RNA sequence: GGGAACGACUCGAGUAGAGUCGAAAAGUUCGGCCCACGCUGGCCGGGAACAAAAUCGGCGCGCUUGCCAUCACCGAACCCGGCGGCGGCUCGGAUGUGGGGCAUCUGCGGACCAGCGCGGUGCGCGUGGGUUUUACCCAUUCGUGGGUAAAACCCAAAAAGAAACAACAACAACAAC
Reactivity to DMS in 0.01 (KOAc 150mM, MgCl2 10mM, bicine 150mM(pH8.5), 24C), signal-to-noise 1, nucleotides 027 to 126: g000u020u000c080g000g000c010c050c020a130c080g020c050u010g040g070c020c000g000g000g020a190a180c160a120a130a110a040u020c060g000g010c070g020c170g030c080u000u070g000c010c110a060u020c050a110c080c070g030a050a070c040c050c000g000g020c080g070g010c050g000g020c000u000c020g000g020a050u040g050u010g000g000g040g000c070a020u040c050u000g010c020g020g010a130c050c000a030g040c080g000c000g000g000u020g040c050g010c000g000
Reactivity to 2A3 in 0.01 (KOAc 150mM, MgCl2 10mM, bicine 150mM(pH8.5), 24C), signal-to-noise 2, nucleotides 027 to 126: g030u060u110c020g010g000c010c010c010a040c060g010c100u080g180g080c000c110g000g030g000a050a030c120a180a060a000a110u100c030g010g000c030g020c000g000c140u100u130g130c020c010a060u150c050a010c040c000g020a100a040c000c040c000g010g020c010g030g010c020g000g040c050u060c020g070g000a060u040g160u170g050g020g000g010c030a020u000c010u060g000c030g020g100a170c010c030a070g040c020g010c070g050g040u070g060c140g000c040g000

An RNA of 177 nucleotides, treated with DMS and 2A3 and read out base by base. Conditions: 150 mM KOAc, 10 mM MgCl2 and 150 mM bicine (pH 8.5), 24 C. The data come from the RNA Mapping Database (RMDB), library OK1LIB. The 2A3 profile rests on 976 reads.